[RMDB]
Chemical mapping of a 177-nucleotide RNA with DMS. For DMS, 814 sequencing reads were counted. Conditions: 150 mM KOAc, 10 mM MgCl2 and 150 mM bicine (pH 8.5), 24 C. Reactivities are rounded to 0.1 and cut off at 0 and 3.
RNA sequence: GGGAACGACUCGAGUAGAGUCGAAAAUGGAAAUGCGGCUGUUAGAAGAAGUGCUGAAUCAGUUUCUCGAUGUGAUUCAAAUCCCAUCGAUAGGAGGCAGUCAGCCGGAUCGAGGAACCGAUCAGAAUGAGGUGAUUUACUUCGGUAAAUCACCUCAAAAAGAAACAACAACAACAAC
Reactivity to DMS in 0.01 (KOAc 150mM, MgCl2 10mM, bicine 150mM(pH8.5), 24C), signal-to-noise 1, nucleotides 027 to 126: u000g000g030a050a070a050u000g010c040g000g000c000u010g000u000u000a130g020a140a090g000a160a180g030u010g050c070u010g000a100a070u020c000a040g010u000u000u000c010u000c010g000a060u000g000u010g010a090u000u030c170a070a170a230u020c010c010c000a080u000c140g030a150u000a090g010g000a070g010g050c030a070g000u000c020a010g000c040c060g000g000a040u010c010g000a080g000g010a010a030c040c000g000a030u000c020a070g020a160a140